[RMDB]
This 207-nucleotide RNA was probed chemically with 2A3 and DMS.
Source: RMDB library M2RFPK, as collected in RNAgym.
Conditions: 150 mM KOAc, 10 mM MgCl2 and 150 mM bicine (pH 8.5), 24 C.
For 2A3 the reverse transcriptase was SuperScript II with manganese.
For DMS the reverse transcriptase was MarathonRT.
For DMS, 2,783 sequencing reads were counted.
RNA sequence: GGGAACGACUCGAGUAGAGUCGAAAACCAUUCCUUAUACCUUGAGUAUUGCUGACUUCAGUUUAGCGUGCAUGCUCUUGGCUAUUCUCAUAGUGAUUGUCAAAUUUGGAGUUACUUAUUCGUCAAUAAAACACUACCACGUUCGCGUGGUAGUGAACAACACACAAGUCUUCGGACUUGUGUGUUGAAAAGAAACAACAACAACAAC
Reactivity to 2A3 in 0.01 (KOAc 150mM, MgCl2 10mM, bicine 150mM(pH8.5), 24C), signal-to-noise 4, nucleotides 027 to 156: c050c010a060u090u160c030c010u110u110a100u030a120c010c000u030u030g000a000g030u020a060u210u080g040c040u060g060a240c020u120u100c200a160g120u140u110u210a050g000c040g040u070g050c000a020u030g000c000u030c000u000u000g000g000c000u060a070u080u050c090u010c080a080u120a080g090u100g070a100u090u150g100u110c040a020a110a090u170u080u070g050g000a050g050u070u030a080c040u100u070a080u200u130c050g110u060c070a070a200u110a130a090a070a030c000a000c000u000a010c000c000a000c000g010u020u030c140g020c000g110u020g000g000u000a000g000u000g000a000a000
Reactivity to DMS in 0.01 (KOAc 150mM, MgCl2 10mM, bicine 150mM(pH8.5), 24C), signal-to-noise 1, nucleotides 027 to 156: c020c050a240u020u010c000c040u010u000a180u000a020c040c010u000u000g040a080g040u000a060u000u000g010c010u000g010a090c030u000u000c010a300g010u020u000u000a060g010c020g060u030g000c010a060u010g030c020u000c020u000u010g000g040c030u000a110u010u010c020u020c030a150u000a080g030u000g000a100u000u010g020u000c030a030a130a160u000u010u010g000g000a150g000u000u000a110c040u000u000a100u000u000c030g040u000c010a040a080u010a030a050a090a220c000a000c010u000a010c010c000a010c000g030u000u000c300g060c040g110u010g010g000u000a000g000u000g000a010a040